[RMDB]
RNA sequence: GGGAACGACUCGAGUAGAGUCGAAAAGGUGGCACUGGGAUGGCAGGUUCUGCGGUGGCGCGUCAUCUGGUGAGUCGAUACGGGGUGCGGCAGGUGGUGUUGGCCAGUCGUGCUGGUGAGCACACGGACCUGUUAUAUCAUUCGUGAUAUAACAGGUAAAAGAAACAACAACAACAAC
Reactivity to DMS in 0.01 (KOAc 150mM, MgCl2 10mM, bicine 150mM(pH8.5), 24C), signal-to-noise 9, nucleotides 027 to 126: g010g020u000g010g010c070a070c070u000g010g010g010a080u010g010g010c050a070g010g010u000u000c060u000g020c070g010g020u000g000g010c060g010c080g010u000c050a060u000c040u000g010g010u010g010a090g010u000c050g000a090u010a090c110g000g010g000g010u000g010c080g010g000c060a050g010g020u000g000g010u000g010u000u000g000g000c020c020a050g010u010c170g010u000g010c020u000g010g010u000g000a080g010c020a040c040a080c100g000g000
Reactivity to 2A3 in 0.01 (KOAc 150mM, MgCl2 10mM, bicine 150mM(pH8.5), 24C), signal-to-noise 8, nucleotides 027 to 126: g060g000u050g020g010c030a020c090u050g010g030g050a050u050g050g010c040a030g050g000u090u060c030u070g020c010g040g040u040g020g020c040g000c020g060u040c020a070u020c030u040g060g030u070g050a050g050u060c030g020a020u040a160c050g040g000g000g000u050g020c000g020g000c020a020g000g050u070g010g020u050g030u050u070g030g000c000c010a020g020u070c050g030u070g050c020u030g010g090u060g080a010g010c020a010c000a010c050g020g010